RNA sequence: GGGAACGACUCGAGUAGAGUCGAAAAGCAUGUCAUCUUGCUAAAGCCUUACAAACAUACAGCGAGACUGGUAGUGAUCUUCUUUACCAACCACCCAACUGUAGCAUAACCUCUGGCGUGUUGCAAACACUAAGAAGAUGUUCGCAUCUUCUUAGUGAAAAGAAACAACAACAACAAC
Reactivity to 2A3 in 0.01 (KOAc 150mM, MgCl2 10mM, bicine 150mM(pH8.5), 24C), signal-to-noise 6, nucleotides 027 to 126: g020c020a020u040g040u070c010a080u030c040u040u040g010c010u070a100a060a050g030c010c010u070u080a060c060a050a120a000c030a040u190a030c020a020g010c010g030a020g030a060c040u020g040g020u050a040g040u020g110a070u030c050u100u000c000u030u120u020a040c010c020a030a010c010c020a030c000c010c000a030a040c040u040g030u070a010g030c010a020u030a080a060c000c020u030c040u050g050g010c030g030u060g030u040u060g010c000a020a040a020
Reactivity to DMS in 0.01 (KOAc 150mM, MgCl2 10mM, bicine 150mM(pH8.5), 24C), signal-to-noise 9, nucleotides 027 to 126: g010c050a040u010g010u000c080a080u010c050u000u000g020c030u000a060a130a140g010c020c020u000u010a070c170a090a100a090c110a100u010a070c120a040g000c040g000a080g010a070c150u000g010g010u000a040g010u000g010a070u000c090u000u000c040u000u000u010a070c060c030a070a090c070c060a080c020c020c020a060a080c090u000g010u000a040g020c050a060u000a070a090c060c030u000c080u000g010g010c060g010u000g010u000u010g010c090a080a080a160
Record summary
Conditions: 150 mM KOAc, 10 mM MgCl2 and 150 mM bicine (pH 8.5), 24 C. The record gives the reactivity of an RNA of 177 nucleotides to 2A3 and DMS. It was measured as part of the RMDB library 15KREP. For 2A3 the reverse transcriptase was SuperScript II with manganese. For 2A3, 11,057 sequencing reads were counted.